[RMDB]
RNA sequence: GGGAACGACUCGAGUAGAGUCGAAAAGCCGAUGAAUUGCCGAGAAGCCUGGCUCGAAAUCGUCGACGCAUCGACGACGGUCCUGCCAUGAGACCGUGACGAGGACAUGUCGCCUCGAAUGGCGUCGUAUAACAUGAGUGGUUCGCCACUCAUGUAACAUGUUGUAAAGGUUCGCCUUUACAACAUGAAAAGAAACAACAACAACAAC
Reactivity to DMS in 0.01 (KOAc 150mM, MgCl2 10mM, bicine 150mM(pH8.5), 24C), signal-to-noise 4, nucleotides 027 to 156: g030c020c020g010a090u000g010a100a070u010u010g010c060c030g030a120g010a110a140g010c040c030u010g030g010c010u000c030g020a060a090a070u000c020g030u010c000g010a050c060g010c100a190u000c010g020a020c000g010a020c010g000g010u000c000c010u000g000c010c080a050u020g010a120g020a030c100c020g010u000g010a070c020g020a050g030g010a070c040a100u010g010u000c040g010c010c010u000c050g020a100a070u000g010g010c010g010u000c010g020u000a100u000a110a070c010a010u010g010a010g010u000g010g010u000u000c300g020c010c000a020c010u000c000a000u000g010u000a050a180
Reactivity to 2A3 in 0.01 (KOAc 150mM, MgCl2 10mM, bicine 150mM(pH8.5), 24C), signal-to-noise 9, nucleotides 027 to 156: g060c020c010g010a040u090g050a060a210u160u110g030c040c030g060a030g060a140a030g060c060c100u110g050g000c030u020c050g080a090a070a050u040c030g030u020c000g020a030c040g030c080a080u050c010g010a000c010g000a000c000g000g000u000c010c010u040g040c010c010a030u050g040a040g040a170c040c030g030u040g000a010c020g070a010g000g000a010c030a110u210g020u110c040g010c020c020u010c010g010a040a040u060g040g010c000g010u030c020g000u040a120u050a200a020c000a000u000g000a000g000u010g020g020u060u080c190g040c060c000a000c000u000c000a000u000g000u000a000a010
Annotation:
Structure probing data (DMS and 2A3) for a 207-nucleotide construct. For DMS the reverse transcriptase was MarathonRT. 2A3 adducts were read by reverse transcription with SuperScript II with manganese. Conditions: 150 mM KOAc, 10 mM MgCl2 and 150 mM bicine (pH 8.5), 24 C. Source: RMDB library M2RFPK, as collected in RNAgym. Values cover nucleotides 27 to 156.